[RMDB]
RNA sequence: GGGAACGACUCGAGUAGAGUCGAAAAGCAGGGUCAUGCCUUUAUCAUCGUUCUGAAGGUGACGAAUAUUAUGUUCUGAAUACGAACAGGUUAUGACGCUCAUAUUAGCUCCUGAGAUUGGUAAAACCAGAUAUCGCUGUUUCGACAGCGAUAUCUGAAAAGAAACAACAACAACAAC
Reactivity to DMS in 0.01 (KOAc 150mM, MgCl2 10mM, bicine 150mM(pH8.5), 24C), signal-to-noise 3, nucleotides 027 to 126: g050c170a080g030g020g020u000c000a030u000g030c020c000u000u000u000a130u030c060a050u000c030g020u020u010c260u020g050a130a160g030g010u000g020a020c060g020a060a050u000a070u010u020a130u000g020u010u000c010u000g010a110a110u050a100c300g010a040a010c040a080g000g020u000u010a020u010g000a060c020g000c040u010c020a130u020a130u000u000a080g010c090u000c020c040u000g000a050g010a100u000u000g020g000u010a050a080a130a220c210
Reactivity to 2A3 in 0.01 (KOAc 150mM, MgCl2 10mM, bicine 150mM(pH8.5), 24C), signal-to-noise 2, nucleotides 027 to 126: g040c060a000g040g000g050u020c000a010u000g000c000c000u060u140u120a060u050c050a020u020c010g120u140u020c030u160g100a120a060g000g020u040g010a020c000g040a030a030u080a040u260u120a090u100g030u020u000c010u020g190a170a050u170a090c050g010a020a010c000a020g000g040u110u190a040u000g010a010c040g040c060u020c010a060u100a150u070u130a020g030c000u030c060c010u030g110a090g000a190u080u160g070g040u170a030a040a030a060c050

This 177-nucleotide RNA was probed chemically with DMS and 2A3. The RNA was probed in 150 mM KOAc, 10 mM MgCl2 and 150 mM bicine (pH 8.5) at 24 C. For DMS the reverse transcriptase was MarathonRT.